Conditions: 150 mM KOAc, 10 mM MgCl2 and 150 mM bicine (pH 8.5), 24 C. An RNA of 207 nucleotides, treated with 2A3 and DMS and read out base by base. For DMS the reverse transcriptase was MarathonRT. 2A3 adducts were read by reverse transcription with SuperScript II with manganese. Source: RMDB library OK3TST, as collected in RNAgym.
[RMDB]
RNA sequence: GGGAACGACUCGAGUAGAGUCGAAAACUUCCGCGACAACUUCAUCGGACUGAUGUACUACAACAGCAGCGGAAACCUGGGCGUGCUGGCCGGUCAGUCGUCGCAGCUCAACGCGGUGGUGGAGCUGCAGGACCGCAACACCGAGCUGUCCUACCAGCAUAUAGGUUCCUUUCGAGGAACCUAUAUGAAAAGAAACAACAACAACAAC
Reactivity to 2A3 in 0.01 (KOAc 150mM, MgCl2 10mM, bicine 150mM(pH8.5), 24C), signal-to-noise 4, nucleotides 027 to 156: c030u050u020c020c010g040c010g060a050c060a250a080c050u200u100c050a060u050c020g120g130a130c100u160g020a030u060g040u110a100c080u080a050c080a150a010c030a130g090c020a010g000c020g020g040a010a040a010c010c000u020g000g010g040c080g050u070g030c010u010g030g030c030c040g030g000u050c040a050g070u100c010g060u090c060g020c000a000g000c010u000c020a060a110c050g020c100g190g080u190g040g030u010g070g020a010g000c000u000g000c000a020g000g120a010c030c070g000c030a070a050c010a050c090c010g010a030g040c010u000g020u020c000c000u020a070c010c030a000g040
Reactivity to DMS in 0.01 (KOAc 150mM, MgCl2 10mM, bicine 150mM(pH8.5), 24C), signal-to-noise 2, nucleotides 027 to 156: c080u090u000c090c010g040c050g010a170c030a070a130c080u000u010c040a040u010c020g040g000a180c060u000g010a040u000g040u000a270c110u000a170c090a140a140c070a030g030c000a170g000c020g020g010a090a070a080c080c040u000g000g000g020c060g000u000g030c010u020g070g020c060c040g040g020u010c040a090g010u010c010g020u000c050g000c020a020g000c030u010c020a040a040c000g030c050g000g020u000g030g020u000g010g010a060g010c000u000g030c000a090g010g000a040c030c030g030c040a070a050c000a050c030c020g000a120g030c000u000g000u000c020c020u000a080c050c030a100g010